[RMDB]
RNA sequence: GGGAACGACUCGAGUAGAGUCGAAAAGAAAAUAGCCUUUAUUAUUCUCUUAGUCAACCGUACACUUACGUACAGUGACGUAUUCUAUACUAACGUAGAUUACAAAUCAACGUUCAAAUGAAAGAAAGGCAAUACAAAUCUUCGGAUUUGUAUUGCCAAAAGAAACAACAACAACAAC
Reactivity to 2A3 in 0.01 (KOAc 150mM, MgCl2 10mM, bicine 150mM(pH8.5), 24C), signal-to-noise 3, nucleotides 027 to 126: g070a000a080a000a020u080a030g080c050c030u050u110u000a110u070u020a040u040u050c010u000c000u030u090a020g010u000c010a000a160c070c050g000u040a010c060a030c000u180u170a090c100g000u000a000c040a100g000u000g060a000c030g020u000a120u010u010c070u080a130u030a230c080u080a100a000c020g020u000a020g000a010u020u070a090c050a090a160a000u050c020a070a010c000g000u000u040c040a080a090a100u110g090a060a050a160g080a040a060a000
Reactivity to DMS in 0.01 (KOAc 150mM, MgCl2 10mM, bicine 150mM(pH8.5), 24C), signal-to-noise 1, nucleotides 027 to 126: g010a080a080a000a080u000a050g040c140c040u000u010u020a040u000u030a100u010u000c070u000c030u000u040a130g000u000c010a070a050c000c080g100u000a000c000a240c300u050u000a200c290g000u000a020c040a080g020u000g040a000c030g000u030a010u000u020c030u000a040u020a060c190u010a060a000c000g020u000a070g060a000u010u000a000c280a080a150a000u000c000a000a000c000g000u000u000c170a020a030a090u000g020a080a110a080g000a110a000a080
Description
The record gives the reactivity of an RNA of 177 nucleotides to 2A3 and DMS. For 2A3, 1,507 sequencing reads were counted. High 2A3 reactivity points to a flexible backbone, as in loops and unpaired stretches. For 2A3 the reverse transcriptase was SuperScript II with manganese.